[RMDB]
RNA sequence: GGGAACGACUCGAGUAGAGUCGAAAAGAAUCUCACUUGGGCGAAAGCUUUAGUGACUCCAUUACGCGCAGCGCGUAUUAGUGAGAUUAUGAAUACGUUGAAAUGAAAGUAUGGGGAUUUAUGAGAAGGGUUAUCUAUUCUUCGGAAUAGAUAACCCAAAAGAAACAACAACAACAAC
Reactivity to DMS in 0.01 (KOAc 150mM, MgCl2 10mM, bicine 150mM(pH8.5), 24C), signal-to-noise 2, nucleotides 027 to 126: g020a110a010u000c040u010c000a000c010u000u000g030g000g040c000g000a090a190a210g010c020u010u000u000a090g020u000g000a110c030u000c000c050a050u030u020a000c010g000c060g030c160a100g040c030g010c000g000u000a000u000u000a060g030u000g030a140g030a040u030u000a130u010g040a030a060u020a090c070g010u030u030g000a050a010a050u070g020a110a180a090g000u000a020u000g000g000g000g000a110u010u060u000a050u000g000a110g020a140a210
Reactivity to 2A3 in 0.01 (KOAc 150mM, MgCl2 10mM, bicine 150mM(pH8.5), 24C), signal-to-noise 2, nucleotides 027 to 126: g110a090a150u030c000u000c010a000c000u040u080g000g000g000c000g020a070a000a010g010c050u050u000u110a070g000u020g070a070c000u030c030c000a000u010u140a050c010g010c000g060c080a060g040c030g000c000g020u000a000u000u120a080g140u090g150a200g000a160u040u300a010u110g050a000a000u040a040c050g040u070u050g090a130a090a020u180g040a110a010a000g010u000a030u070g050g000g000g010a070u050u160u170a220u210g140a120g020a090a050
Structure probing data (DMS and 2A3) for a 177-nucleotide construct. DMS adducts were read by reverse transcription with MarathonRT. Conditions: 150 mM KOAc, 10 mM MgCl2 and 150 mM bicine (pH 8.5), 24 C. For 2A3 the reverse transcriptase was SuperScript II with manganese.